RNA sequence: GGGAACGACUCGAGUAGAGUCGAAAAGCGUACUACAGCGUCACCCGAAGCAUCGAUCUAUGGACAAUGCGUAUCCCAAAUAGGAUACGCCUAAACCAUAGGGAGCUUCGACAAGUCGCUGUAUCGCAAAAUCGAGAAGUCUUCGGACUUCUCGAAACUUGCAAGAGUACUUCGGUACUCUUGCAAGAAAAGAAACAACAACAACAAC
Reactivity to 2A3 in 0.01 (KOAc 150mM, MgCl2 10mM, bicine 150mM(pH8.5), 24C), signal-to-noise 4, nucleotides 027 to 156: g000c010g040u110a110c070u010a000c020a000g010c000g030u040c000a070c010c020c020g010a010a010g000c030a190u300c060g090a040u020c040u000a000u000g020g020a080c100a150a070u100g010c000g000u000a000u000c000c010c050a160a300a110u300a110g010g000a010u000a010c000g020c000c000u140a110a060a020c000c000a000u000a000g000g000g010a010g020c000u010u000c000g010a020c020a120a300g020u020c000g000c000u000g000u010a020u210c000g000c000a050a010a000a120u030c000g010a000g000a010a010g010u030c020u070u130c270g060g000a010c000u000u010c000u000c000g000a000a000a000
Reactivity to DMS in 0.01 (KOAc 150mM, MgCl2 10mM, bicine 150mM(pH8.5), 24C), signal-to-noise 1, nucleotides 027 to 156: g000c040g030u000a040c080u020a050c000a010g060c000g000u010c020a180c120c000c000g020a070a020g030c020a300u000c070g000a030u000c000u000a000u000g000g010a110c070a240a110u020g000c000g010u000a020u000c000c030c000a020a170a200u020a040g000g040a010u020a000c030g020c000c030u000a050a130a230c000c000a010u010a000g030g010g000a070g020c000u000u000c010g020a010c060a020a090g000u000c000g000c000u000g000u000a010u000c050g000c020a100a060a070a080u000c000g020a050g010a020a020g010u000c020u000u010c300g030g020a020c020u000u010c000u010c000g000a000a000a030

This 207-nucleotide RNA was probed chemically with 2A3 and DMS. Reactivities are rounded to 0.1 and cut off at 0 and 3. The DMS profile rests on 1,868 reads. For DMS the reverse transcriptase was MarathonRT. The reactions ran in a buffer of 150 mM KOAc, 10 mM MgCl2 and 150 mM bicine (pH 8.5), at 24 C. 2A3 adducts were read by reverse transcription with SuperScript II with manganese.